[RMDB]
RNA sequence: GGGAACGACUCGAGUAGAGUCGAAAAUCUUCCUAGGUCCGGAGUCGAUCUCCAUCUGAUCCGUCCGGGCCCUCUUCGUCGGGGGAGCUCCCUCCCCGUCCUUCCCUUUUCUUAUUAUUCCGAUGAUUGCGGUAGCAGUUCGCUGCUACCAAAAGAAACAACAACAACAAC
Reactivity to 2A3 in 0.01 (KOAc 150mM, MgCl2 10mM, bicine 150mM(pH8.5), 24C), signal-to-noise 9, nucleotides 027 to 129: u020c010u030u020c010c010u020a050g000g010u000c010c000g020g010a030g070u220c040g030a030u000c040u040c090c040a140u060c110u110g010a000u010c030c070g090u000c010c010g020g000g000c010c020c000u070c030u080u090c030g100u010c020g010g000g000g000g010a040g010c030u060c020c000c000u020c000c000c000c000g030u020c010c000u010u020c000c000c000u030u060u080u040c060u050u090a190u110u060a120u180u060c050c070g090a090u090g040a060u040u160g050c050
Reactivity to DMS in 0.01 (KOAc 150mM, MgCl2 10mM, bicine 150mM(pH8.5), 24C), signal-to-noise 9, nucleotides 027 to 129: u040c170u030u000c030c020u000a040g000g000u030c000c040g020g010a080g030u040c150g020a060u030c000u040c190c140a120u010c160u000g030a020u020c060c200g000u040c000c000g020g000g010c000c010c010u000c040u040u030c060g000u000c080g000g020g000g000g030a080g030c050u000c020c020c020u000c000c010c000c030g030u040c030c020u000u030c030c000c050u010u010u020u020c020u020u030a090u050u050a130u080u030c020c040g020a090u000g000a100u000u030g020c300